[RMDB]
RNA sequence: GGGAACGACUCGAGUAGAGUCGAAAAGAUAUGGACUAAGAGGGGGAGUAUCGCUCUCGGAAACGAGAGCGAUACAUCGAUCCUACCCACCUUAGUCCUAAGUCAAACAUACAGUUCGCUGUAUGAACUAGCAUAUCAUGUUCGCAUGAUAUGCUAGAAAAGAAACAACAACAACAAC
Reactivity to 2A3 in 0.01 (KOAc 150mM, MgCl2 10mM, bicine 150mM(pH8.5), 24C), signal-to-noise 2, nucleotides 027 to 126: g000a000u020a020u060g010g000a000c000u010a000a000g030a090g020g010g010g020g030a250g020u010a000u000c010g000c010u000c000u000c000g000g000a020a000a000c000g010a000g000a010g010c000g020a000u000a000c000a000u020c030g010a000u070c000c020u030a090c000c000c000a040c010c000u010u000a000g000u000c000c000u000a010a000g000u000c010a080a100a040c010a020u020a010c010a010g040u040u100c220g140c140u000g000u010a010u030g020a040a100
Reactivity to DMS in 0.01 (KOAc 150mM, MgCl2 10mM, bicine 150mM(pH8.5), 24C), signal-to-noise 4, nucleotides 027 to 126: g010a020u000a130u010g000g010a000c000u000a020a000g000a100g000g020g000g010g000a110g030u000a000u000c000g010c010u000c000u000c010g030g000a030a020a050c010g010a010g010a020g020c000g000a000u000a000c010a110u000c160g010a110u010c150c080u000a140c000c000c000a050c040c010u000u000a010g000u000c000c000u000a000a060g000u000c000a120a090a250c010a000u000a000c000a000g000u000u020c240g010c000u020g000u000a000u000g000a130a220

This 177-nucleotide RNA was probed chemically with 2A3 and DMS. For DMS the reverse transcriptase was MarathonRT. The DMS profile rests on 4,867 reads. As a SHAPE reagent, 2A3 marks flexible, mostly unpaired nucleotides at the ribose 2'-OH.